RNA sequence: GGGAACGACUCGAGUAGAGUCGAAAAGCCACAUGAUGUUUUCAUUUUGAAAAGUGAGAGCUUUGCGCAGUGACGACUUUUAUCAUCACCCUUGACUGAUGGCUAAAGCGGAGGCUUCGGCCUCCGCCAAAGAUACCCUGUUCGCAGGGUAUCUUUGAAAAGAAACAACAACAACAAC
Reactivity to 2A3 in 0.01 (KOAc 150mM, MgCl2 10mM, bicine 150mM(pH8.5), 24C), signal-to-noise 3, nucleotides 027 to 126: g010c020c010a020c020a070u150g030a040u080g060u040u020u030u060c010a050u040u080u120u190g140a150a140a030a010g020u030g020a070g010a010g000c000u100u090u120g040c060g000c030a020g020u010g050a030c040g020a040c020u100u110u080u130a110u130c060a020u040c020a100c030c000c000u050u080g050a040c000u030g050a080u060g080g000c020u090a140a080a000g000c000g000g010a000g010g020c040u050u030c090g100g000c020c000u000c000c000g000c000
Reactivity to DMS in 0.01 (KOAc 150mM, MgCl2 10mM, bicine 150mM(pH8.5), 24C), signal-to-noise 4, nucleotides 027 to 126: g010c010c020a090c170a090u010g010a060u000g010u000u000u000u000c010a030u010u000u000u000g000a080a060a060a060g010u000g000a070g000a090g020c020u000u000u000g010c040g020c040a040g010u000g010a080c060g010a030c050u010u000u010u010a100u010c080a070u000c110a090c020c020c020u000u010g010a060c080u000g010a070u010g020g020c050u010a040a080a130g020c000g010g000a020g010g000c000u000u010c160g040g000c000c010u000c000c000g000c010

The record gives the reactivity of an RNA of 177 nucleotides to 2A3 and DMS. The DMS profile rests on 4,047 reads. The data come from the RNA Mapping Database (RMDB), library RFMREP. Values cover nucleotides 27 to 126. The 2A3 profile rests on 3,534 reads. The RNA was probed in 150 mM KOAc, 10 mM MgCl2 and 150 mM bicine (pH 8.5) at 24 C.